[RMDB]
RNA sequence: GGGAACGACUCGAGUAGAGUCGAAAACCUCUAGUAUUCGUACUAGAGGCACAUGCCGCCCCAACGGCUUCCUGACGGGGCGGAUUCACUAUAAAUGGAGCAAAGCCGCUGUGUUCGCACAGCGGAAUGGAUGCUAUAGAUUCGUCUAUAGCAUCCAAAAAGAAACAACAACAACAAC
Reactivity to 2A3 in 0.01 (KOAc 150mM, MgCl2 10mM, bicine 150mM(pH8.5), 24C), signal-to-noise 4, nucleotides 027 to 126: c000c010u000c000u000a000g000u000a030u050u050c250g030u050a000c000u000a000g000a010g000g010c040a020c000a080u160g030c010c000g000c010c010c000c010a020a020c060g110g010c000u110u120c010c010u010g030a020c050g000g000g010g000c010g020g000a010u090u090c040a030c080u100a040u050a300a110a100u220g010g000a000g000c000a040a050a010g060c000c000g000c010u010g010u010g030u060u090c220g030c090a000c000a000g010c030g000g020a000a000
Reactivity to DMS in 0.01 (KOAc 150mM, MgCl2 10mM, bicine 150mM(pH8.5), 24C), signal-to-noise 5, nucleotides 027 to 126: c010c000u000c000u000a000g000u000a020u010u010c200g030u000a010c000u000a000g000a010g010g020c070a040c130a110u010g010c000c000g000c000c000c000c020a050a300c090g000g000c030u000u000c020c000u000g000a090c300g000g000g010g010c000g010g010a010u000u000c060a070c120u000a070u020a050a050a100u010g000g010a020g000c020a130a120a160g010c000c000g010c000u000g020u000g010u000u020c180g030c000a020c000a000g000c010g010g000a000a010